The record gives the reactivity of an RNA of 177 nucleotides to 2A3. Reactivities are rounded to 0.1 and cut off at 0 and 3. The reactions ran in a buffer of 150 mM KOAc, 10 mM MgCl2 and 150 mM bicine (pH 8.5), at 24 C.

[RMDB]
RNA sequence: GGGAACGACUCGAGUAGAGUCGAAAACGAGUGUGAAGAUAUAUGUGAGGUACACGUCGGGUAGGCCUGCUUAUCACGCUAGUAGCAUUAGGGAAGUCUGCCGACUUCAUUAGUGGGUUAACCUCCGGACGAUACCUGCGUUCGCGCAGGUAUCGUCAAAAGAAACAACAACAACAAC
Reactivity to 2A3 in 0.01 (KOAc 150mM, MgCl2 10mM, bicine 150mM(pH8.5), 24C), signal-to-noise 1, nucleotides 027 to 126: c070g010a170g080u100g000u020g090a150a250g100a120u210a040u020a040u300g130u040g050a000g000g000u050a000c000a040c080g020u010c150g040g000g180u100a050g010g010c030c020u000g010c030u060u000a040u070c060a000c100g000c080u020a000g100u140a060g070c030a030u120u000a000g000g110g060a000a000g000u000c000u040g070c020c010g010a000c050u010u080c100a010u000u000a030g000u060g000g040g170u050u000a030a020c000c000u060c000c000g050